Structure probing data (DMS and 2A3) for a 177-nucleotide construct. Reactivities are rounded to 0.1 and cut off at 0 and 3.

RNA sequence: GGGAACGACUCGAGUAGAGUCGAAAAAUGAGACUUCUGACGACGAGUGGGCUGCUGCAGUUGAUGAAGCGUUCCCUCUCGAUGAAGCAGAAGAUGUUACUGAAUCUGUGCAAGAAGAAGCACAACCGAAACCAGAAUAGUUCGCUAUUCUGGUUUCAAAAGAAACAACAACAACAAC
Reactivity to DMS in 0.01 (KOAc 150mM, MgCl2 10mM, bicine 150mM(pH8.5), 24C), signal-to-noise 5, nucleotides 027 to 126: a070u000g000a130g000a130c000u000u010c010u000g010a110c070g010a110c020g020a010g020u000g010g010g030c300u000g000c010u000g010c010a050g000u010u010g020a120u000g000a060a020g000c000g000u000u000c000c000c000u010c010u000c000g010a040u000g000a150a140g000c010a020g010a040a020g000a080u000g000u000u000a120c080u010g020a160a170u000c090u000g000u000g000c020a060a120g010a080a130g000a110a140g010c020a020c020a050a080c240c080
Reactivity to 2A3 in 0.01 (KOAc 150mM, MgCl2 10mM, bicine 150mM(pH8.5), 24C), signal-to-noise 4, nucleotides 027 to 126: a000u150g020a040g040a030c000u010u000c000u020g030a040c020g000a000c000g000a000g010u010g000g020g030c040u070g000c010u020g010c050a050g020u240u190g130a190u050g040a050a000g000c000g000u110u140c000c010c000u010c000u000c000g090a100u110g040a070a020g000c000a000g010a000a000g020a020u100g060u110u100a090c070u060g060a040a090u070c070u070g000u010g010c020a060a040g080a080a010g060a060a010g300c010a000c010a010a010c040c060